[RMDB]
RNA sequence: GGGAACGACUCGAGUAGAGUCGAAAAGCAAUACGUCUUUGGACCUUCGGUUUGCUGCUUUUAGUCUUACUGCUCUCCAACCGAUCUGUCUGGCAUGGUAGGACCUUGAGGAACGAUUGUUCCAACCGCAGUAGUCCAGUUUCGACUGGACUACUGCAAAAGAAACAACAACAACAAC
Reactivity to DMS in 0.01 (KOAc 150mM, MgCl2 10mM, bicine 150mM(pH8.5), 24C), signal-to-noise 2, nucleotides 027 to 126: g040c120a010a050u080a040c170g000u010c000u010u020u030g010g000a080c050c010u000u000c090g010g020u010u000u010g040c050u000g000c080u050u000u020u050a120g010u000c040u010u000a100c090u000g010c030u010c020u030c020c100a140a110c000c070g000a060u000c050u000g000u030c030u000g010g050c090a000u000g000g010u000a020g040g000a070c020c050u000u000g020a170g020g110a010a000c010g000a130u010u000g000u010u000c000c050a070a080c280c090
Reactivity to 2A3 in 0.01 (KOAc 150mM, MgCl2 10mM, bicine 150mM(pH8.5), 24C), signal-to-noise 5, nucleotides 027 to 126: g050c010a030a070u090a190c050g050u010c070u070u040u100g060g020a080c000c000u020u020c050g000g060u040u060u100g050c010u020g040c040u090u090u030u210a060g010u010c010u040u040a070c050u060g020c010u020c000u040c060c020a050a080c000c010g060a050u040c020u040g060u030c020u030g080g000c020a060u080g100g000u070a060g050g050a060c000c000u040u070g060a080g030g030a010a020c030g260a300u020u270g010u030u010c010c000a020a010c060c050
An RNA of 177 nucleotides, treated with DMS and 2A3 and read out base by base.
For 2A3, 2,813 sequencing reads were counted.
The reactions ran in a buffer of 150 mM KOAc, 10 mM MgCl2 and 150 mM bicine (pH 8.5), at 24 C.
For 2A3 the reverse transcriptase was SuperScript II with manganese.
Reactivities are rounded to 0.1 and cut off at 0 and 3.